[RMDB]
RNA sequence: GGGAACGACUCGAGUAGAGUCGAAAAUAGCGGGUUCCCCCCAAUACUACCCGCAGGUAGACCUUGGUGGAGAUGUCUAGUGAGGUAGAGCGACCGAUUGGGUGGCCAGCAGUAGAAAUACUGCACCUGAUUUCUUGGAUUUCGAUCCAAGAAAUCAAAAAGAAACAACAACAACAAC
Reactivity to DMS in 0.01 (KOAc 150mM, MgCl2 10mM, bicine 150mM(pH8.5), 24C), signal-to-noise 2, nucleotides 027 to 126: u020a100g020c040g000g020g000u010u010c040c010c040c040c040c030a080a060u040a040c030u030a040c020c010c020g010c040a150g000g010u000a020g000a070c080c040u000u010g010g040u040g000g020a080g020a070u000g000u010c040u000a060g010u010g010a090g000g030u010a060g010a080g020c060g000a070c070c070g000a050u020u010g010g000g000u020g000g000c080c060a070g000c020a000g010u000a030g000a110a040a130u000a000c000u000g000c010a060c170c070
Reactivity to 2A3 in 0.01 (KOAc 150mM, MgCl2 10mM, bicine 150mM(pH8.5), 24C), signal-to-noise 4, nucleotides 027 to 126: u080a010g020c050g010g020g010u080u120c020c000c000c000c000c000a050a020u080a100c030u020a020c000c000c000g010c030a000g050g090u060a010g020a050c030c040u090u080g140g020u130g130g050a060g010a060u100g030u020c000u050a080g070u010g060a090g050g010u020a030g020a030g040c060g070a040c030c000g130a150u060u110g020g030g000u030g040g010c060c110a030g000c000a000g000u010a000g020a010a020a010u010a000c000u000g000c000a010c000c020

This 177-nucleotide RNA was probed chemically with DMS and 2A3. Values are in units of 0.01, from 0 to 300, in steps of 10. For 2A3 the reverse transcriptase was SuperScript II with manganese. For DMS the reverse transcriptase was MarathonRT. It was measured as part of the RMDB libraries RFM100 and RFMREP.